An RNA of 207 nucleotides, treated with 2A3 and read out base by base. Source: RMDB library OK3TST, as collected in RNAgym. High 2A3 reactivity points to a flexible backbone, as in loops and unpaired stretches. Values cover nucleotides 27 to 156.

RNA sequence: GGGAACGACUCGAGUAGAGUCGAAAAGGGAUGGUGAUCUGGACCAAGUGUUGGCAGUGCAGGUGGAAAGAAAGGAAAGACUGACAUAGAAUUAAGAGAAGUGGCUGCAUGGAAAAGACAAAGACAUUUUAGAGAAUGACUUUUUUUCCCCAUGAGCGAGUGUAGGAACGUUCGCGUUCCUACACUCAAAAGAAACAACAACAACAAC
Reactivity to 2A3 in 0.01 (KOAc 150mM, MgCl2 10mM, bicine 150mM(pH8.5), 24C), signal-to-noise 1, nucleotides 027 to 156: g010g000g000a030u050g030g060u020g000a110u020c040u070g030g010a040c000c040a040a140g020u010g020u120u000g070g020c060a040g000u010g070c030a000g030g020u060g030g070a000a050a050g030a050a070a000g070g050a080a050a020g030a030c020u030g020a030c010a040u130a040g100a180a050u140u110a070a000g000a010g010a120a000g110u040g040g010c010u020g020c050a010u000g010g020a040a050a050a000g040a020c070a020a050a010g030a030c010a030u040u070u040u130a100g010a000g020a040a070u050g030a010c020u130u000u000u000u060u000u000c040c000c000c010a000u080g000a020g100c060